[RMDB]
RNA sequence: GGGAACGACUCGAGUAGAGUCGAAAAUUAUUGAGUGCAGCGUUGAUGAACCUGCCGGCCGGCUAAAUUAAUUAGCAAGAAAGUCUGAAACUGGCUCAAAGGUUCACCAGCACUGCACCCAAUCACGUGCUAGAGGCUGAUUCGUCAGCCUCUAGCAAAAAGAAACAACAACAACAAC
Reactivity to 2A3 in 0.01 (KOAc 150mM, MgCl2 10mM, bicine 150mM(pH8.5), 24C), signal-to-noise 1, nucleotides 027 to 126: u170u110a130u020u000g030a040g000u010g000c000a000g000c000g000u010u060g040a010u000g000a000a000c000c000u130g030c110c000g050g000c020c000g040g000c000u020a080a000a000u080u090a080a080u090u000a020g000c110a110a000g200a290a130a000g050u130c080u100g010a180a000a000c020u050g010g000c060u070c090a160a100a010g020g000u000u030c000a000c000c000a010g000c000a000c000u000g030c000a000c020c010c000a000a000u080c000a000c150g040